[RMDB]
RNA sequence: GGGAACGACUCGAGUAGAGUCGAAAAAUUGCGACCUCUCUUUCACUUAGGGCAAAGACUGGGGGGGGGAUUUUUGUUGGGUAACAGGCAUGGUUGAGACUAGGGUGCUCUGUCUUUGUGUAGGGCAACAAUUUCUAUGUUUCGACAUAGAAAUUGUAAAAGAAACAACAACAACAAC
Reactivity to 2A3 in 0.01 (KOAc 150mM, MgCl2 10mM, bicine 150mM(pH8.5), 24C), signal-to-noise 1, nucleotides 027 to 126: a000u070u160g040c050g030a110c040c010u000c000u030c000u000u070u080c020a060c080u080u130a110g000g020g020c000a060a070a080g040a080c160u130g000g040g000g020g020g020g040g020g060a070u180u120u040u140u150g110u120u080g010g000g030u040a060a070c010a050g050g050c020a010u060g040g000u010u150g000a040g000a070c040u070a080g110g040g060u000g030c000u000c000u010g090u030c010u150u130u030g060u020g000u050a040g000g000g000c000a010
Reactivity to DMS in 0.01 (KOAc 150mM, MgCl2 10mM, bicine 150mM(pH8.5), 24C), signal-to-noise 3, nucleotides 027 to 126: a080u010u000g020c070g010a100c040c010u010c030u010c020u000u000u010c070a100c080u000u000a090g010g000g000c060a070a100a090g000a080c090u000g010g000g010g030g030g000g030g000g020a040u010u000u010u000u000g010u010u010g010g010g000u010a060a080c100a060g010g000c070a040u010g010g010u000u000g000a120g010a100c080u010a090g000g010g000u000g010c020u000c030u000g010u010c020u000u010u000g010u000g020u000a040g010g000g020c090a080
Record summary: The record gives the reactivity of an RNA of 177 nucleotides to 2A3 and DMS. The RNA was probed in 150 mM KOAc, 10 mM MgCl2 and 150 mM bicine (pH 8.5) at 24 C.